RNA sequence: GGGAACGACUCGAGUAGAGUCGAAAAUAACAACUGUUUUCGUCCUUAAACCAACGAUAACAGCUGUUAGGCCAUGUUUUGUAACGGCUGUUAGGAGCGCUGUUAAGGAGUGUUAACGGUGAGUCGAGAGCUUUGACGAAUUCGUUCGUCAAAGCUCAAAAGAAACAACAACAACAAC
Reactivity to 2A3 in 0.01 (KOAc 150mM, MgCl2 10mM, bicine 150mM(pH8.5), 24C), signal-to-noise 3, nucleotides 027 to 126: u240a050a040c060a000a000c010u000g010u000u000u010u020c030g010u020c020c000u010u010a030a010a070c020c030a030a010c010g090a050u000a010a000c000a010g000c000u010g010u000u000a020g040g020c060c040a230u160g130u040u180u110u160g210u050a020a010c010g000g020c010u000g020u000u010a010g050g060a130g100c050g000c060u030g040u050u000a000a000g070g020a040g040u110g000u030u010a020a000c000g020g000u010g060a030g110u120c060g050a010
Reactivity to DMS in 0.01 (KOAc 150mM, MgCl2 10mM, bicine 150mM(pH8.5), 24C), signal-to-noise 1, nucleotides 027 to 126: u050a030a090c170a130a030c030u010g000u000u000u000u000c000g000u000c020c020u010u000a040a090a060c280c130a060a050c000g070a230u000a000a000c000a000g020c010u010g000u000u010a020g020g030c210c170a100u020g020u020u000u020u010g030u010a020a010c020g010g020c000u000g030u010u010a020g000g000a080g000c070g000c120u000g020u000u000a000a040g000g020a050g010u010g020u000u000a010a030c000g030g040u000g020a070g000u000c120g000a210
Chemical mapping of a 177-nucleotide RNA with 2A3 and DMS. The RNA was probed in 150 mM KOAc, 10 mM MgCl2 and 150 mM bicine (pH 8.5) at 24 C. Reactivities are given for positions 27 through 126. Source: RMDB libraries RFM100 and RFMREP, as collected in RNAgym.